[RMDB]
Overview: Structure probing data (2A3) for a 207-nucleotide construct. The 2A3 profile rests on 1,122 reads. Source: RMDB library OK3TST, as collected in RNAgym. The RNA was probed in 150 mM KOAc, 10 mM MgCl2 and 150 mM bicine (pH 8.5) at 24 C.

RNA sequence: GGGAACGACUCGAGUAGAGUCGAAAAUUAUGAAAGGAAAAGUGGCCUGAACUGAGGGACUUUGGGAGAGUGAUGGUUGGCAAGAGGAGGUCACCUCAAAUGUGCUGCUUCUCUAGUAAUGGUGAACACGUUGCAAGUAUUUGGUCAUAAAUCUCCAGAUACCCUGACUGUUCGCAGUCAGGGUAUCAAAAGAAACAACAACAACAAC
Reactivity to 2A3 in 0.01 (KOAc 150mM, MgCl2 10mM, bicine 150mM(pH8.5), 24C), signal-to-noise 2, nucleotides 027 to 156: u200u090a050u120g010a000a050a070g040g010a060a040a050a020g050u020g010g010c020c050u060g020a090a040c040u030g010a010g030g000g030a000c030u080u070u110g030g020g000a050g000a010g010u050g030a120u070g010g030u070u030g040g020c020a040a020g010a010g020g000a010g040g000u040c040a120c070c010u040c000a050a070a060u120g050u060g000c000u010g000c000u020u020c000u010c000u040a010g020u120a020a030u090g040g010u060g060a070a010c030a000c070g030u030u060g010c030a100a000g000u010a100u080u050u060g050g000u000c000a000u060a140a050a060u060c030u000c030c000a000